[RMDB]
RNA sequence: GGGAACGACUCGAGUAGAGUCGAAAAUGCAAGUAGUGCUAUUGUUGGAAUCACCGUACCUAUUUAGGUUUACGCUCCAAGAUCGGUGGAUAGCAGCCCUAUCAAUACCUAGGAGAACUGUGCUAUGAAAACGGUAUUGGCUUCGGCCAAUACCGAACGCUACGUACUACUUCGGUAGUACGUAGCGAAAAGAAACAACAACAACAAC
Reactivity to 2A3 in 0.01 (KOAc 150mM, MgCl2 10mM, bicine 150mM(pH8.5), 24C), signal-to-noise 1, nucleotides 027 to 156: u080g000c040a000a040g070u090a000g060u090g000c020u000a100u100u070g100u030u050g090g000a060a070u140c040a040c070c000g060u010a010c000c010u050a200u300u300u130a110g030g000u000u000u110a020c100g000c060u000c030c010a010a020g000a170u150c070g020g080u000g010g010a000u040a010g000c050a000g010c040c000c000u000a000u090c000a020a000u020a160c020c000u020a000g020g000a000g000a100a020c070u070g000u100g010c000u040a020u150g070a140a160a070a000c030g000g000u000a000u000u010g030g000c000u000u000c120g100g000c000c000a000a000u000a010c000c000g000a010a000
The record gives the reactivity of an RNA of 207 nucleotides to 2A3. Values cover nucleotides 27 to 156. For 2A3, 485 sequencing reads were counted.